The record gives the reactivity of an RNA of 177 nucleotides to DMS and 2A3.
Conditions: 150 mM KOAc, 10 mM MgCl2 and 150 mM bicine (pH 8.5), 24 C.
For DMS, 1,905 sequencing reads were counted.
Values cover nucleotides 27 to 126.
Values are in units of 0.01, from 0 to 300, in steps of 10.
The 2A3 profile rests on 4,142 reads.
RNA sequence: GGGAACGACUCGAGUAGAGUCGAAAAGAUAUGGAUACAGCUUUUGACGCUCUCACAUCGGAAACGAUGUGUAGAGCGAUAAGCUGGUCCUAAGUCAAAGACGUUUUCAGUUCGCUGAAAACGUCAACGUCCCAAGAUAGUUCGCUAUCUUGGGACGAAAAGAAACAACAACAACAAC
Reactivity to DMS in 0.01 (KOAc 150mM, MgCl2 10mM, bicine 150mM(pH8.5), 24C), signal-to-noise 2, nucleotides 027 to 126: g000a040u010a230u010g000g000a020u000a030c010a000g000c000u000u000u020u010g020a180c100g010c000u000c000u000c010a010c010a000u000c020g020g000a060a070a140c020g020a000u000g010u000g010u000a000g010a010g030c000g020a000u000a020a010g020c010u000g010g000u000c000c000u000a020a110g010u010c030a080a080a120g000a010c000g010u000u000u000u000c000a000g010u010u030c260g000c000u000g010a000a000a000a000c000g020u000c000a010a090
Reactivity to 2A3 in 0.01 (KOAc 150mM, MgCl2 10mM, bicine 150mM(pH8.5), 24C), signal-to-noise 2, nucleotides 027 to 126: g030a020u000a010u100g010g010a050u300a300c000a000g000c000u150u070u130u190g300a240c300g000c010u020c000u000c000a000c010a000u000c000g000g000a030a020a000c020g000a000u000g000u000g000u040a000g000a000g000c000g000a010u000a000a010g000c010u010g000g000u000c000c000u000a100a020g000u010c050a150a020a120g000a000c010g010u000u000u000u000c000a020g010u020u150c240g040c060u000g010a010a000a000a000c000g000u000c000a000a000